[RMDB]
RNA sequence: GGGAACGACUCGAGUAGAGUCGAAAAUCGGUCCUGAAGAAAUGCUGAGAUAUGAGCAGGUCUGACCACUGGAGUUCGCAGCAACAGAGCUCGGCCUCCUUGGGCACCGCAAACGGCACUCAGCCUCCAGGGAACCGCCAUCUCGUUCCUGAGGCGAACGCCGAUUUACUUUCGAGUAAAUCGGCGUAAAAGAAACAACAACAACAAC
Reactivity to 2A3 in 0.01 (KOAc 150mM, MgCl2 10mM, bicine 150mM(pH8.5), 24C), signal-to-noise 1, nucleotides 027 to 156: u090c000g020g000u030c000c000u060g030a070a080g050a040a270a060u150g000c010u030g030a010g000a020u150a060u300g020a000g050c060a100g000g000u000c070u110g060a040c020c010a020c190u020g000g000a000g000u030u000c020g060c130a000g000c010a070a140c080a190g140a050g120c030u030c030g000g000c020c000u000c000c000u000u020g020g030g020c050a030c140c020g070c010a090a200a000c040g010g010c000a000c070u000c010a000g020c010c030u000c030c020a010g090g000g010a070a020c010c010g000c050c000a060u030c050u030c040g000u050u040c000c050u090g030a120g070g040c040g050a060